Structure probing data (2A3 and DMS) for a 207-nucleotide construct.
The reactions ran in a buffer of 150 mM KOAc, 10 mM MgCl2 and 150 mM bicine (pH 8.5), at 24 C.
The DMS profile rests on 3,424 reads.
For 2A3, 1,851 sequencing reads were counted.

[RMDB]
RNA sequence: GGGAACGACUCGAGUAGAGUCGAAAAACUACAACCCGCUGUUCCUGGGCACCAGCCCGCGAGCCCCGUGGGUCGUGUUCGAGGAGGGCCCUCUCACAGGUAUCAAGUCGUCGGAGUUCUCGUACUACGAGGCGACCGACACCAGCUUCCUGGCAGGUGUUAUAGGCAAUUUCGAUUGCCUAUAACAAAAAGAAACAACAACAACAAC
Reactivity to 2A3 in 0.01 (KOAc 150mM, MgCl2 10mM, bicine 150mM(pH8.5), 24C), signal-to-noise 3, nucleotides 027 to 156: a010c130u230a070c040a070a100c000c010c000g030c050u080g100u090u060c010c000u000g020g000g030c010a050c050c030a070g040c010c010c000g000c000g000a080g030c020c030c020c020g000u020g000g000g000u020c020g000u010g000u020u060c060g110a010g000g020a030g020g030g020c000c010c010u040c000u020c020a130c000a040g010g010u050a100u200c050a050a080g030u060c020g010u000c000g050g050a020g000u300u130c010u000c010g040u140a290c070u080a040c130g010a010g000g020c010g150a180c000c000g000a010c000a000c000c020a020g030c010u070u020c010c010u020g030g000c010a020g080g070
Reactivity to DMS in 0.01 (KOAc 150mM, MgCl2 10mM, bicine 150mM(pH8.5), 24C), signal-to-noise 1, nucleotides 027 to 156: a100c040u010a150c030a050a070c000c010c030g000c060u000g030u020u000c010c010u000g010g000g010c000a070c050c070a090g000c010c000c020g000c020g000a120g030c050c070c110c050g030u020g010g000g010u000c300g030u000g020u010u000c000g020a060g040g000a110g020g020g010c030c040c010u000c020u000c040a030c040a030g020g030u000a080u000c080a090a120g000u000c060g010u010c020g000g000a270g020u000u000c030u010c040g020u000a190c190u000a060c000g010a080g020g010c020g000a100c010c010g000a020c010a040c010c070a160g000c030u000u000c030c020u000g000g010c050a070g020g010